Chemical mapping of a 177-nucleotide RNA with 2A3 and DMS.
[RMDB]
RNA sequence: GGGAACGACUCGAGUAGAGUCGAAAAUCUUCGUUCGGCGCGUACAGGCGUCCUUCGACUUCCUUCACCUUGGUCGGGUCUUUCAUCAUUUCCUUGAAGUCUUCGACGCUGAUGGCGCCCUUGAAACUACCAUACAAAUCUUCGGAUUUGUAUGGUAAAAAGAAACAACAACAACAAC
Reactivity to 2A3 in 0.01 (KOAc 150mM, MgCl2 10mM, bicine 150mM(pH8.5), 24C), signal-to-noise 4, nucleotides 027 to 126: u020c010u120u160c040g070u090u130c070g030g010c050g000c010g060u090a080c020a020g020g040c000g010u000c010c020u060u080c060g010a020c000u010u010c020c000u080u130c070a110c030c020u060u100g070g020u100c050g030g040g040u010c050u040u140u060c030a100u020c010a090u070u080u020c010c000u020u150g010a010a000g000u000c000u040u030c030g020a000c000g000c000u040g010a160u030g010g010c000g000c000c000c000u000u070g050a020a010a000c030
Reactivity to DMS in 0.01 (KOAc 150mM, MgCl2 10mM, bicine 150mM(pH8.5), 24C), signal-to-noise 7, nucleotides 027 to 126: u000c050u000u010c060g010u000u000c180g020g010c110g020c010g050u000a090c090a190g000g010c010g010u000c010c030u010u000c240g000a020c060u000u000c010c300u000u000c110a080c070c040u000u000g010g010u000c080g010g010g000u000c060u010u000u000c050a090u020c070a090u010u000u000c030c030u000u010g000a030a040g010u000c010u000u010c230g000a020c010g020c020u000g000a120u010g000g000c020g010c010c010c030u000u000g010a060a080a100c160
Conditions: 150 mM KOAc, 10 mM MgCl2 and 150 mM bicine (pH 8.5), 24 C. Reactivities are rounded to 0.1 and cut off at 0 and 3. For DMS the reverse transcriptase was MarathonRT. Values cover nucleotides 27 to 126.